[RMDB]
RNA sequence: GGGAACGACUCGAGUAGAGUCGAAAAGAUAUGGAAUCCGUGUUCAUCAACAGCGUGCUUCGGAAACGAAGCACGACAUGAUGCGCACCGGAUUCCUAAGUCAAACAGGAGGCUUCGGCCUCCUGAACAAUCCCGUAAUCUUCGGAUUACGGGAUUGAAAAGAAACAACAACAACAAC
Reactivity to 2A3 in 0.01 (KOAc 150mM, MgCl2 10mM, bicine 150mM(pH8.5), 24C), signal-to-noise 1, nucleotides 027 to 126: g000a000u070a050u250g000g010a000a000u000c000c010g000u000g040u000u030c000a000u000c010a020a180c040a200g080c000g020u000g000c010u030u030c020g030g050a100a120a100c020g000a010a000g000c010a000c020g000a000c000a050u060g000a000u010g000c000g000c020a010c070c000g000g000a010u000u000c000c000u000a000a010g020u020c050a080a040a090c000a000g010g000a000g000g010c010u130u160c300g110g030c030c010u000c020c000u020g000a010a010
Reactivity to DMS in 0.01 (KOAc 150mM, MgCl2 10mM, bicine 150mM(pH8.5), 24C), signal-to-noise 3, nucleotides 027 to 126: g020a030u000a300u000g010g010a010a000u000c000c000g020u000g000u010u000c000a010u000c000a030a160c300a230g000c010g020u000g010c010u000u000c020g010g000a100a100a240c000g000a010a000g010c000a000c000g010a010c060a190u000g010a000u000g000c110g000c020a000c140c110g050g010a000u000u000c000c000u010a020a070g010u000c030a130a180a300c000a000g030g020a030g020g010c010u010u020c210g020g000c000c000u000c000c000u000g000a030a140

Notes
Source: RMDB library TTRDES, as collected in RNAgym. This 177-nucleotide RNA was probed chemically with 2A3 and DMS. The reactions ran in a buffer of 150 mM KOAc, 10 mM MgCl2 and 150 mM bicine (pH 8.5), at 24 C. Values cover nucleotides 27 to 126. For 2A3, 3,650 sequencing reads were counted.